Conditions: 150 mM KOAc, 10 mM MgCl2 and 150 mM bicine (pH 8.5), 24 C.
This 207-nucleotide RNA was probed chemically with DMS and 2A3.
For DMS, 3,092 sequencing reads were counted.
High DMS reactivity at an A or C suggests that its Watson-Crick edge is free.
As a SHAPE reagent, 2A3 marks flexible, mostly unpaired nucleotides at the ribose 2'-OH.
[RMDB]
RNA sequence: GGGAACGACUCGAGUAGAGUCGAAAAUUAGACUUCGGUCUAAAACCUUCCUAAGUCACCAACAGCUCGAAGUAGCUCAACAGCAUAUUCGGAAACGAAUAUGACAUGAGCUACAUGCGAGACAUGGUGAUAUGGAGACGACAAGGUUCGCCUUGAACAGGCUUAUAGGAUUCGUCCUAUAAGCCUGAAAAGAAACAACAACAACAAC
Reactivity to DMS in 0.01 (KOAc 150mM, MgCl2 10mM, bicine 150mM(pH8.5), 24C), signal-to-noise 1, nucleotides 027 to 156: u000u000a000g020a020c040u000u010c230g040g010u000c030u000a040a030a160a100c040c010u020u000c010c010u000a050a240g020u000c010a030c000c020a090a120c080a180g000c000u000c010g040a030a050g060u020a010g010c010u000c000a010a050c090a130g020c020a010u000a000u000u010c010g000g000a140a210a240c040g010a040a000u000a000u000g000a010c020a300u000g000a000g030c000u000a000c010a010u000g030c000g000a010g000a040c060a210u020g000g030u000g010a030u010a060u000g010g000a040g010a070c040g000a150c030a080a100g000g010u000u000c080g010c000c010u000u000g050a140a260
Reactivity to 2A3 in 0.01 (KOAc 150mM, MgCl2 10mM, bicine 150mM(pH8.5), 24C), signal-to-noise 5, nucleotides 027 to 156: u020u000a000g000a000c000u020u030c300g070g000u010c010u000a010a000a030a060c010c020u040u050c010c000u050a150a080g010u000c000a000c010c000a020a100c040a150g020c000u000c010g020a040a010g010u000a000g000c000u000c000a050a150c040a100g060c000a000u010a000u010u000c000g030g060a070a070a080c000g000a000a000u000a000u000g130a050c000a060u030g000a000g000c000u000a000c000a010u040g000c000g010a000g020a050c010a080u050g000g000u000g010a000u000a030u030g010g010a060g040a050c120g010a040c010a030a020g080g010u040u110c200g110c040c010u080u100g050a090a020